[RMDB]
RNA sequence: GGGAACGACUCGAGUAGAGUCGAAAAGUGAUUUGGACUGACGCGCAAUGGCAAAGUAUUUACGCAACUGGACAAGAUGUACUUGUUGCAGCCGCGGCAGGUUCAGGUAAAACAGCUGUACUAGUUGAAUCCCUUCCCAGUUCGCUGGGAAGGGAUUAAAAGAAACAACAACAACAAC
Reactivity to 2A3 in 0.01 (KOAc 150mM, MgCl2 10mM, bicine 150mM(pH8.5), 24C), signal-to-noise 2, nucleotides 027 to 126: g160u070g010a180u030u000u000g030g000a010c000u040g030a040c020g010c000g020c120a130a240u200g010g060c050a090a060a010g060u130a150u040u220u060a030c110g000c010a110a040c030u020g000g070a030c050a030a140g070a250u210g020u120a110c000u020u080g000u080u050g000c030a010g070c080c030g000c000g030g000c010a000g000g080u000u000c000a000g030g010u020a080a090a000a040c050a040g020c040u130g040u200a060c020u100a070g030u030u060g040
Reactivity to DMS in 0.01 (KOAc 150mM, MgCl2 10mM, bicine 150mM(pH8.5), 24C), signal-to-noise 2, nucleotides 027 to 126: g050u000g000a020u040u010u000g000g030a060c000u010g010a050c080g020c080g000c100a080a070u030g000g010c040a060a100a160g020u030a080u060u010u010a070c200g000c040a070a030c020u000g000g000a070c130a080a050g020a180u030g000u030a050c010u010u000g020u040u020g000c050a110g020c160c100g030c040g000g000c020a060g050g000u030u000c000a000g000g000u000a010a070a120a170c050a080g000c040u020g030u000a110c150u010a060g020u020u020g030
Notes
Conditions: 150 mM KOAc, 10 mM MgCl2 and 150 mM bicine (pH 8.5), 24 C. This 177-nucleotide RNA was probed chemically with 2A3 and DMS. It was measured as part of the RMDB library OK1LIB. DMS adducts were read by reverse transcription with MarathonRT.